An RNA of 207 nucleotides, treated with 2A3 and read out base by base.
High 2A3 reactivity points to a flexible backbone, as in loops and unpaired stretches.
2A3 adducts were read by reverse transcription with SuperScript II with manganese.
The RNA was probed in 150 mM KOAc, 10 mM MgCl2 and 150 mM bicine (pH 8.5) at 24 C.
[RMDB]
RNA sequence: GGGAACGACUCGAGUAGAGUCGAAAACGAACCCAUGAACCUGGUCAGGUCCGGAAGGAAGCAGCCAUAAGUGGAUCAUCGCGUGUGCCGCAGGGUAGCCUGCUCUGAGCUGCUACCAUAAGUAACGCUCGGAUAAGGAUUAUCGAAGAUAGGUGCAGUCUACUUGGACGUUCGCGUCCAAGUAGACAAAAGAAACAACAACAACAAC
Reactivity to 2A3 in 0.01 (KOAc 150mM, MgCl2 10mM, bicine 150mM(pH8.5), 24C), signal-to-noise 1, nucleotides 027 to 156: c040g010a050a010c000c000c000a000u080g040a000a100c020c000u080g010g050u100c020a040g020g000u020c010c010g150g020a020a050g040g000a000a010g000c000a010g000c030c030a040u050a140a010g150u020g070g030a000u110c000a040u100c080g080c020g060u080g000u040g040c000c000g000c110a000g050g000g000u000a040g040c000c020u060g000c010u010c020u040g010a000g000c020u020g000c000u050a080c030c090a150u100a250a030g010u000a090a020c020g000c020u010c000g000g070a020u050a090a080g020g030a040u030u040a040u110c040g050a120a030g040a080u220a020g000g100u020g000c020a000